[RMDB]
This 177-nucleotide RNA was probed chemically with 2A3 and DMS. For DMS, 1,383 sequencing reads were counted. In probing experiments dimethyl sulfate is read out at A N1 and C N3, which are open when not base-paired. The RNA was probed in 150 mM KOAc, 10 mM MgCl2 and 150 mM bicine (pH 8.5) at 24 C. The data come from the RNA Mapping Database (RMDB), library OK2TRN. For DMS the reverse transcriptase was MarathonRT.
RNA sequence: GGGAACGACUCGAGUAGAGUCGAAAAUUACGUACAGAUGAAGGCUGGCUGUAUCUGGCAGUGGUCAUUGACCUGUGGUCACGUGCCGUUAUUGGCUGGUCAAUGUCGCCACGCAUGACGGCGCAACUGUUCGCAACAAGUUCGCUUGUUGCGAACAAAAAGAAACAACAACAACAAC
Reactivity to 2A3 in 0.01 (KOAc 150mM, MgCl2 10mM, bicine 150mM(pH8.5), 24C), signal-to-noise 2, nucleotides 027 to 126: u140u030a030c040g040u060a000c030a040g150a080u060g110a220a010g020g000c000u000g000g060c000u000g000u010a120u040c090u120g030g000c000a000g030u000g010g030u020c000a000u020u110g130a120c020c050u070g000u060g060g020u020c020a020c080g140u040g000c000c020g010u010u010a050u060u190g040g000c000u010g010g020u000c010a010a020u100g030u070c030g010c000c020a060c060g130c040a100u190g050a040c060g000g000c000g000c040a040a010c060
Reactivity to DMS in 0.01 (KOAc 150mM, MgCl2 10mM, bicine 150mM(pH8.5), 24C), signal-to-noise 2, nucleotides 027 to 126: u000u000a090c060g000u000a110c080a060g020a110u010g000a100a140g010g000c010u010g020g020c010u030g030u000a010u010c080u020g060g010c010a100g010u000g010g010u000c010a030u010u000g020a070c250c150u010g000u000g010g000u000c010a000c080g020u000g050c000c000g010u000u000a030u000u000g010g000c010u000g000g000u010c000a070a030u000g000u000c050g000c060c070a110c190g020c130a120u000g000a030c120g000g000c030g000c130a080a090c080